[RMDB]
RNA sequence: GGGAACGACUCGAGUAGAGUCGAAAAAAUAGAAUAACAAGGCUGUCAAUUUGAGCUUGACGGCUGCAAACCGAAUGGAGUGAAAUCCCUUCUGGAGUGCAGUCUGAUUUGUUAUGCCAUUUUGCAGCUAAGCAUUGCAAUUCGUUGCAAUGCUUAGAAAAGAAACAACAACAACAAC
Reactivity to DMS in 0.01 (KOAc 150mM, MgCl2 10mM, bicine 150mM(pH8.5), 24C), signal-to-noise 8, nucleotides 027 to 126: a040a050u020a070g010a150a060u020a060a060c070a060a090g000g000c010u000g000u030c020a030a020u010u000u010g000a150g010c090u000u010g010a070c150g000g000c000u000g000c000a010a020a020c010c000g000a010a010u010g000g000a020g000u010g020a130a120a160u000c010c000c050u000u000c000u050g040g010a040g020u000g000c000a010g000u000c010u010g010a090u020u010u010g010u000u010a030u010g000c020c010a020u000u000u000u000g010c080a050g010
Reactivity to 2A3 in 0.01 (KOAc 150mM, MgCl2 10mM, bicine 150mM(pH8.5), 24C), signal-to-noise 9, nucleotides 027 to 126: a010a000u270a060g100a060a060u150a090a020c070a060a030g070g000c010u030g120u280c020a010a020u010u010u040g050a070g020c010u030u040g020a010c010g010g000c000u000g000c000a020a020a020c000c000g000a000a000u050g000g010a010g010u070g060a040a050a060u010c010c000c000u030u010c090u240g030g000a050g020u020g000c000a000g010u000c020u050g100a140u060u070u090g040u040u030a030u100g000c010c000a000u010u010u010u010g000c010a010g000
An RNA of 177 nucleotides, treated with DMS and 2A3 and read out base by base. For 2A3 the reverse transcriptase was SuperScript II with manganese. It was measured as part of the RMDB libraries RFM100 and RFMREP. For DMS the reverse transcriptase was MarathonRT. The RNA was probed in 150 mM KOAc, 10 mM MgCl2 and 150 mM bicine (pH 8.5) at 24 C.